[RMDB]
RNA sequence: GGGAACGACUCGAGUAGAGUCGAAAAACUAUCGCAUGGAGAAAGCGUAGGAAGGUUCUGCUGAUUUUUUGGCACUGCCUGCCAUCAGGCAAAUCCUUUAAUCUCCAAAGGUCCUGCUGCUUUAAAACAGUCAGUACUGAUUCGUCAGUACUGACUGAAAAGAAACAACAACAACAAC
Reactivity to DMS in 0.01 (KOAc 150mM, MgCl2 10mM, bicine 150mM(pH8.5), 24C), signal-to-noise 2, nucleotides 027 to 126: a100c080u000a060u010c030g020c090a080u020g010g000a080g010a050a060a090g010c050g020u000a040g010g000a070a060g020g020u000u000c110u000g020c020u000g010a030u000u010u000u000u010u000g020g000c070a060c100u000g000c060c040u000g000c070c080a100u000c150a090g000g010c010a040a100a140u000c000c010u010u000u000a090a060u000c000u000c030c040a050a070a100g020g020u000c030c020u000g030c070u000g000c040u000u000u000a060a070a110a140
Reactivity to 2A3 in 0.01 (KOAc 150mM, MgCl2 10mM, bicine 150mM(pH8.5), 24C), signal-to-noise 3, nucleotides 027 to 126: a000c040u080a050u200c040g030c090a070u140g050g020a060g070a100a080a040g070c040g030u020a020g080g060a050a010g020g000u080u090c030u060g000c020u040g070a120u050u080u090u070u140u090g010g000c020a040c090u070g030c020c000u010g000c040c040a150u230c020a060g060g000c010a060a050a040u030c000c000u030u030u060a080a070u020c020u030c010c030a070a030a020g020g010u010c000c010u010g020c030u060g000c000u100u090u140a080a140a020a030